[RMDB]
RNA sequence: GGGAACGACUCGAGUAGAGUCGAAAAGAAGGAAAGACACCUAGCCCGUGUUUUGCAUGCCGCUAUAAGCAUGUAAGUUAGUCAAGCCCGAGUACAGGAUAGCCGCUCGGUCAAACUUACAGUAAGUCUUCUUAAAACCUUAGGUUCGCCUAAGGAACGUACUAAGGCUGUUCGCAGCCUUAGUACGAAAAGAAACAACAACAACAAC
Reactivity to DMS in 0.01 (KOAc 150mM, MgCl2 10mM, bicine 150mM(pH8.5), 24C), signal-to-noise 2, nucleotides 027 to 156: g000a160a160g030g010a050a090a120g010a110c020a080c020c000u000a110g010c050c000c170g000u000g030u000u000u000u020g000c000a080u000g020c010c030g000c030u010a140u000a070a040g040c000a130u000g050u000a000a040g050u000u000a160g020u010c120a100a190g020c150c010c000g000a080g000u000a100c140a260g000g000a300u000a070g040c020c080g040c020u000c020g000g020u030c020a020a070a050c010u010u010a020c000a110g020u000a020a050g010u010c030u050u000c080u010u000a070a040a140a190c020c000u010u010a020g000g000u010u020c300g050c000c000u000a000a010g010g020a020a020
Reactivity to 2A3 in 0.01 (KOAc 150mM, MgCl2 10mM, bicine 150mM(pH8.5), 24C), signal-to-noise 3, nucleotides 027 to 156: g030a010a020g050g010a180a020a000g030a010c020a020c020c020u020a020g000c010c010c000g030u020g000u020u080u040u050g090c040a040u080g040c030c020g020c050u110a070u020a280a020g000c000a010u010g000u010a000a030g000u000u040a020g060u100c120a070a000g000c010c000c000g010a000g000u060a080c120a130g060g040a100u100a070g140c040c040g040c010u000c010g000g000u010c010a030a020a000c000u010u020a000c000a020g000u030a040a010g000u000c000u090u000c010u090u130a070a150a100a120c000c000u010u000a010g000g020u060u030c150g070c050c000u000a020a000g000g020a010a000

The record gives the reactivity of an RNA of 207 nucleotides to DMS and 2A3.
The RNA was probed in 150 mM KOAc, 10 mM MgCl2 and 150 mM bicine (pH 8.5) at 24 C.
The data come from the RNA Mapping Database (RMDB), library RFM130.